Record summary:
The record gives the reactivity of an RNA of 177 nucleotides to DMS and 2A3. Conditions: 150 mM KOAc, 10 mM MgCl2 and 150 mM bicine (pH 8.5), 24 C. Values cover nucleotides 27 to 126. 2A3 adducts were read by reverse transcription with SuperScript II with manganese.
[RMDB]
RNA sequence: GGGAACGACUCGAGUAGAGUCGAAAAGAAGAGCAGGCGGAUAAUCUUGUGCAGUAUGCAUGCUCGUAACUCCAGCGCACAAGUGGAAGCACAAGAUUUAAAUCCAGCAUAGCGCAGGAGCCGCAGAAUUUAUGACCACUUUCGAGUGGUCAUAAAUAAAAGAAACAACAACAACAAC
Reactivity to DMS in 0.01 (KOAc 150mM, MgCl2 10mM, bicine 150mM(pH8.5), 24C), signal-to-noise 5, nucleotides 027 to 126: g020a090a100g000a020g020c000a040g000g010c020g000g020a120u020a030a010u010c000u000u000g000u000g000c010a170g010u040a060u040g030c030a060u010g010c010u000c020g000u010a110a170c070u000c020c030a100g000c020g010c020a120c150a110a090g010u000g000g010a090a140g010c010a020c000a010a010g010a030u000u010u030a060a090a060u020c000c010a090g010c120a100u020a070g010c010g030c010a060g000g000a020g000c050c070g020c120a120g000a100
Reactivity to 2A3 in 0.01 (KOAc 150mM, MgCl2 10mM, bicine 150mM(pH8.5), 24C), signal-to-noise 4, nucleotides 027 to 126: g060a050a000g000a000g020c080a030g080g000c010g040g000a060u060a130a010u020c000u000u010g000u000g000c030a050g050u170a050u120g040c040a020u080g010c020u020c020g020u030a030a020c020u000c010c010a020g010c000g010c030a030c030a260a050g060u060g090g100a110a070g000c010a000c000a000a000g010a000u000u040u080a080a070a020u000c010c010a000g040c070a090u120a080g000c030g000c040a060g060g000a020g000c010c020g040c060a030g090a140